Structure probing data (DMS) for a 177-nucleotide construct. The data come from the RNA Mapping Database (RMDB), library TTRINS. The reactions ran in a buffer of 150 mM KOAc, 10 mM MgCl2 and 150 mM bicine (pH 8.5), at 24 C.
RNA sequence: GGGAACGACUCGAGUAGAGUCGAAAAGAUAUGGACUUCGCUUUUUUCCCAUUGCAGCAACAGCAUACUGGAGUCGGAAACGACUCUUAUGACAUGCUGGGAUGGGAAAAAAGCGAAGUCCUAAGUCCAGACCACAUAUGUUCGCAUAUGUGGUCUGAAAAGAAACAACAACAACAAC
Reactivity to DMS in 0.01 (KOAc 150mM, MgCl2 10mM, bicine 150mM(pH8.5), 24C), signal-to-noise 1, nucleotides 027 to 126: g000a130u020a300u000g020g000a030c020u000u010c000g030c000u020u000u000u000u000u010c000c000c000a030u000u000g000c000a000g000c010a050a080c300a170g000c000a020u010a020c300u000g040g000a030g000u000c000g000g000a140a060a300c010g000a000c000u000c000u000u000a000u000g000a050c090a160u000g000c000u010g010g000g000a000u010g000g000g010a000a000a000a000a000a000g020c010g010a000a000g010u000c000c000u000a010a020g040u000c060